[RMDB]
RNA sequence: GGGAACGACUCGAGUAGAGUCGAAAAUAGGCCUUUCGAGGCCUAAAAAAAGAUAUGGAUGUCGGGAGCCUUGUGUGAACGAAGAACUCGGAAACGAGGGAGUUCACCAAGGCGAAGAACGACAUCCUAAGUCAAAAAAUCAUAGUUCGCUAUGAAACAUCUUGUUCACUUUCGAGUGAACAAGAUGAAAAGAAACAACAACAACAAC
Reactivity to 2A3 in 0.01 (KOAc 150mM, MgCl2 10mM, bicine 150mM(pH8.5), 24C), signal-to-noise 1, nucleotides 027 to 156: u080a040g000g000c000c010u130u070u060c270g170a000g000g010c010c000u000a000a010a000a000a000a000a070g030a000u040a020u070g000g000a000u000g000u010c000g000g010g010a020g030c000c020u110u000g160u060g010u000g150a000a000c000g040a210a080g080a040a000c000u000c000g030g020a060a060a060c010g020a030g000g010g000a030g000u000u000c000a000c000c000a000a000g000g000c020g000a000a000g000a000a000c000g000a000c000a010u000c000c000u000a030a010g000u010c000a000a000a000a000a030a290u070c000a000u010a010g010u050u040c240g000c110u020a010u020g020a120a030a000